[RMDB]
Chemical mapping of a 207-nucleotide RNA with 2A3.
The 2A3 profile rests on 453 reads.
RNA sequence: GGGAACGACUCGAGUAGAGUCGAAAAGUGUGCUAUACUAGUAAGGUUGAAUGAAUCAACCCUUGGUGCUUAGCUUCUUUCACCAAGCAUACUACACGCGGAUAACCGCCAAAGGAGAAAAGAUGAACUGCCCGACGAUUCUUCGGAAUCGUCGGAACUCUGCUCUCAUGUUCGCAUGAGAGCAGAGAAAAGAAACAACAACAACAAC
Reactivity to 2A3 in 0.01 (KOAc 150mM, MgCl2 10mM, bicine 150mM(pH8.5), 24C), signal-to-noise 1, nucleotides 027 to 156: g060u060g000u010g010c030u030a030u050a300c040u070a140g070u120a120a090g000g000u000u010g010a110a170u120g130a060a150u090c010a030a000c030c010c000u020u050g030g000u010g030c000u070u070a030g050c000u070u060c000u030u030u030c000a000c010c000a010a000g000c010a040u010a070c010u040a010c080a040c020g090c000g010g000a050u030a280a180c010c000g000c000c000a120a040a040g020g040a030g010a150a020a040a000g060a080u140g090a040a140c070u070g050c010c000c000g000a000c000g000a000u000u000c000u050u000c110g100g000a000a000u000c010g000u010c000g000g000a000a000
Conditions: 150 mM KOAc, 10 mM MgCl2 and 150 mM bicine (pH 8.5), 24 C.